[RMDB]
RNA sequence: GGGAACGACUCGAGUAGAGUCGAAAACGGAGGUUCGCCUCCGAAACUCUACAGUGCAUGUGUCUCCAGUGUUUCUAUGGCGACUGGGGAGGCAGCGCUGUUGGAAUGGAUGGUGUGUUCGCACACCUCACAUGUAAAGGUUCGCCUUUACAUGUGAAAAAGAAACAACAACAACAAC
Reactivity to 2A3 in 0.01 (KOAc 150mM, MgCl2 10mM, bicine 150mM(pH8.5), 24C), signal-to-noise 9, nucleotides 027 to 126: c010g000g010a010g010g010u100u100c200g080c040c000u000c000c000g000a010a000a000c020u000c000u010a010c000a010g000u000g010c080a300u030g040u060g200u010c000u000c010c000a010g000u010g050u030u100u060c250u260a270u300g090g000c070g120a060c010u000g000g000g000g010a000g020g000c000a000g000c010g000c000u010g000u010u070g030g050a110a120u140g080g090a070u090g000g000u010g010u010g020u050u090c190g010c070a000c000a000c010c000
Reactivity to DMS in 0.01 (KOAc 150mM, MgCl2 10mM, bicine 150mM(pH8.5), 24C), signal-to-noise 8, nucleotides 027 to 126: c020g010g010a020g010g010u000u010c230g020c000c000u010c000c000g000a020a060a090c090u000c010u000a020c000a020g020u000g000c010a060u000g040u000g000u000c000u000c000c000a020g000u000g010u000u000u010c200u010a100u020g010g010c060g000a040c010u000g000g000g000g000a020g000g010c000a030g000c010g020c000u000g010u000u010g030g000a070a100u010g010g010a140u010g010g010u000g020u000g000u000u010c220g010c010a020c000a000c000c010
The data come from the RNA Mapping Database (RMDB), library RFMREP. The record gives the reactivity of an RNA of 177 nucleotides to 2A3 and DMS. DMS adducts were read by reverse transcription with MarathonRT. The reactions ran in a buffer of 150 mM KOAc, 10 mM MgCl2 and 150 mM bicine (pH 8.5), at 24 C. Reactivities are rounded to 0.1 and cut off at 0 and 3. Reactivities are given for positions 27 through 126.